The record gives the reactivity of an RNA of 177 nucleotides to DMS and 2A3. It was measured as part of the RMDB library RFMREP. For DMS, 1,140 sequencing reads were counted. Reactivities are given for positions 27 through 126. 2A3 adducts were read by reverse transcription with SuperScript II with manganese. Conditions: 150 mM KOAc, 10 mM MgCl2 and 150 mM bicine (pH 8.5), 24 C.

RNA sequence: GGGAACGACUCGAGUAGAGUCGAAAACAUGUCGGGCAUUGCGUAGGCGUUGUGCACAGUGUUCUUUAAAUUACAAUUGUGCAUCUCAUCCACGUAAAUCACGGCACUAAAGUGCCCUUCGGGGCACGUGUGCAAUUCGGUUCGCCGAAUUGCACACAAAAGAAACAACAACAACAAC
Reactivity to DMS in 0.01 (KOAc 150mM, MgCl2 10mM, bicine 150mM(pH8.5), 24C), signal-to-noise 1, nucleotides 027 to 126: c080a120u000g040u010c050g020g020g000c160a100u010u000g000c000g000u000a020g010g000c300g040u030u000g050u000g000c000a000c000a000g020u000g010u000u000c210u000u000u010a060a070a100u000u010a000c040a040a050u000u010g020u000g000c010a010u010c080u010c030a060u020c000c030a010c020g000u000a020a010a080u000c040a110c040g010g000c000a000c170u030a070a120a140g010u000g000c000c000c000u000u000c180g000g010g000g010c000a000c000
Reactivity to 2A3 in 0.01 (KOAc 150mM, MgCl2 10mM, bicine 150mM(pH8.5), 24C), signal-to-noise 2, nucleotides 027 to 126: c040a020u100g000u000c000g000g040g090c150a060u050u000g000c000g020u010a080g020g000c020g040u030u030g000u000g020c000a000c000a030g030u010g050u120u090c040u120u240u220a210a300a220u230u090a010c060a040a210u040u010g000u020g000c000a010u010c020u010c010a060u080c000c000a000c000g000u020a030a070a050u040c000a050c070g000g000c010a000c030u110a220a030a020g000u010g010c000c000c000u000u050c140g000g000g000g000c010a000c000